[RMDB]
RNA sequence: GGGAACGACUCGAGUAGAGUCGAAAAUGGGCUGAGUGGAAGUUAUCUGUCAGAUGAAGGGCACUAUUGGGUGGGCCUGGAUAUCAGCCCUGCCAUGCUGGAUGAGGCUGUGGACCGAGAGAUAGAACCCGCUUUUAGUAUUCGUACUAAAAGCGGGAAAAGAAACAACAACAACAAC
Reactivity to 2A3 in 0.01 (KOAc 150mM, MgCl2 10mM, bicine 150mM(pH8.5), 24C), signal-to-noise 1, nucleotides 027 to 126: u040g000g030g000c020u030g010a080g040u150g060g060a060a040g020u120u090a130u120c050u110g180u100c040a010g010a100u080g040a040a040g000g010g060c020a010c150u080a110u180u300g260g070g050u100g030g050g000c010c000u030g020g000a000u030a040u180c010a000g000c000c030c000u000g020c040c000a000u070g000c000u020g120g030a110u050g070a030g140g000c110u090g000u040g000g010a000c020c020g060a030g000a000g000a070u000a080g020a060a080
Reactivity to DMS in 0.01 (KOAc 150mM, MgCl2 10mM, bicine 150mM(pH8.5), 24C), signal-to-noise 2, nucleotides 027 to 126: u000g000g010g030c020u000g010a020g020u010g000g030a150a120g000u010u010a080u000c030u000g010u020c070a060g010a150u000g010a230a120g000g010g010c050a060c100u000a160u000u000g010g030g010u000g010g020g010c050c000u010g000g000a150u000a050u000c000a050g000c030c020c000u000g000c010c020a060u010g010c050u000g030g020a080u000g000a100g010g020c020u000g020u000g010g010a030c030c020g020a090g000a070g010a030u000a100g000a060a210